[RMDB]
RNA sequence: GGGAACGACUCGAGUAGAGUCGAAAAGUUGAUCUAGUACUGGUAUUAGGCGGCGACGGUACAUUUCUGCGUGCAGCUGAUCUCGCCCAUGGUGCUGAUCUACCAGUGUUAGGUAUCAACCUAGGACCCUAUUAACGCAGUUCGCUGCGUUAAUAGGAAAAGAAACAACAACAACAAC
Reactivity to DMS in 0.01 (KOAc 150mM, MgCl2 10mM, bicine 150mM(pH8.5), 24C), signal-to-noise 5, nucleotides 027 to 126: g000u000u000g000a010u000c010u000a020g010u000a010c000u000g000g010u000a020u000u000a300g000g000c010g020g010c040g020a070c090g010g010u000a060c150a080u000u010u010c060u000g010c070g020u010g030c090a110g000c160u000g000a030u010c040u000c070g020c110c010c160a150u000g010g040u010g020c070u000g000a100u000c270u000a030c000c010a030g000u000g000u000u000a000g000g010u010a040u000c030a020a050c010c050u010a110g000g000a180c120
Reactivity to 2A3 in 0.01 (KOAc 150mM, MgCl2 10mM, bicine 150mM(pH8.5), 24C), signal-to-noise 6, nucleotides 027 to 126: g000u010u000g000a000u000c000u000a000g010u010a010c000u020g000g000u020a040u120u140a150g040g040c020g010g020c020g050a130c040g070g000u120a080c090a240u140u170u060c040u040g060c010g060u090g160c070a100g010c060u040g010a030u020c010u010c040g010c010c020c010a100u250g120g010u100g030c080u020g000a040u020c020u010a010c000c000a010g000u000g010u020u010a010g000g020u030a030u020c010a000a010c010c000u020a060g020g140a090c010